RNA sequence: GGGAACGACUCGAGUAGAGUCGAAAACGCACCACGCUUGCACCACCGAGCACGACGACCCCAAGGACACCACUCAACACGAGUAAUACCGGAUUAUCACCCCCGAGAAUCGUUGCAAUUAGCCCUUCUGAACUGUCGUCGGGUGAUUGACCACCUGUCCACUUAUACGAUUCGUCGUAUAAGUGGAAAAAGAAACAACAACAACAAC
Reactivity to 2A3 in 0.01 (KOAc 150mM, MgCl2 10mM, bicine 150mM(pH8.5), 24C), signal-to-noise 3, nucleotides 027 to 156: c050g010c010a010c030c010a020c050g020c020u020u050g030c020a020c030c030a040c040c050g020a010g040c030a010c050g050a020c010g040a020c010c010c010c000a020a010g000g020a010c010a030c100c000a020c030u080c030a100a180c070a080c220g040a010g070u080a050a020u050a100c040c000g020g020a040u060u060a080u090c050a110c000c000c000c000c000g040a040g100a080a060u100c080g040u060u050g000c020a040a050u060u000a050g020c000c000c000u060u040c060u100g070a100a080c030u070g020u060c020g020u010c030g020g000g000u030g010a090u030u170g040a060c010c000a010c010c000u020g050
Reactivity to DMS in 0.01 (KOAc 150mM, MgCl2 10mM, bicine 150mM(pH8.5), 24C), signal-to-noise 3, nucleotides 027 to 156: c070g010c050a070c030c010a070c050g000c020u000u000g020c030a080c060c030a090c040c020g000a140g040c030a140c040g000a060c030g020a100c010c080c010c030a050a060g000g010a080c050a080c060c030a030c020u010c010a080a090c040a110c080g000a100g000u000a080a110u010a110c020c050g070g000a100u000u000a030u030c000a090c020c020c020c030c030g010a110g010a040a090u000c060g020u000u000g030c040a080a100u010u000a100g010c000c030c020u000u000c050u000g020a040a050c060u020g020u000c020g020u000c050g020g000g050u000g000a150u000u010g020a170c050c010a040c050c010u020g020

Source: RMDB library OK3TST, as collected in RNAgym. Structure probing data (2A3 and DMS) for a 207-nucleotide construct. The RNA was probed in 150 mM KOAc, 10 mM MgCl2 and 150 mM bicine (pH 8.5) at 24 C.